[RMDB]
RNA sequence: GGGAACGACUCGAGUAGAGUCGAAAAUCAGCAAAAGCAAGGCGGAUAAGUUUCCAUAACAAAACAAAAUCCAAAAAGGCCGGACUGCCAUUGGCCUCCGACUUUACUGCCCGAACCUUGCAAUGUAGCCCAAAUAAAAAUUCGUUUUUAUUUGGGCAAAAGAAACAACAACAACAAC
Reactivity to DMS in 0.01 (KOAc 150mM, MgCl2 10mM, bicine 150mM(pH8.5), 24C), signal-to-noise 7, nucleotides 027 to 126: u040c090a130g030c120a050a040a160a140g000c030a000a020g010g010c170g000g010a030u000a050a300g000u000u000u000c070c070a090u050a120a150c240a090a030a030a020c050a030a040a110a070u010c040c040a030a070a060a060a030g000g020c030c010g000g000a020c190u020g000c000c000a150u030u030g010g020c010c300u000c020c000g000a030c010u000u010u010a040c110u020g000c020c000c010g010a040a130c020c000u000u010g010c010a050a110u010g000u020a120
Reactivity to 2A3 in 0.01 (KOAc 150mM, MgCl2 10mM, bicine 150mM(pH8.5), 24C), signal-to-noise 4, nucleotides 027 to 126: u070c010a020g120c030a030a080a060a010g000c000a000a000g010g000c010g010g010a010u030a080a070g020u020u020u030c070c030a080u170a200a070c080a050a070a010a010c020a030a130a030a030u020c030c020a040a030a010a030a030g050g000c080c010g010g010a020c070u110g010c020c010a260u060u260g010g010c000c010u010c000c010g020a030c000u030u040u080a040c030u040g020c000c000c000g020a070a070c010c000u000u000g010c000a010a090u130g030u110a030
An RNA of 177 nucleotides, treated with DMS and 2A3 and read out base by base.
The reactions ran in a buffer of 150 mM KOAc, 10 mM MgCl2 and 150 mM bicine (pH 8.5), at 24 C.
The data come from the RNA Mapping Database (RMDB), libraries RFM100 and RFMREP.
DMS adducts were read by reverse transcription with MarathonRT.
2A3 adducts were read by reverse transcription with SuperScript II with manganese.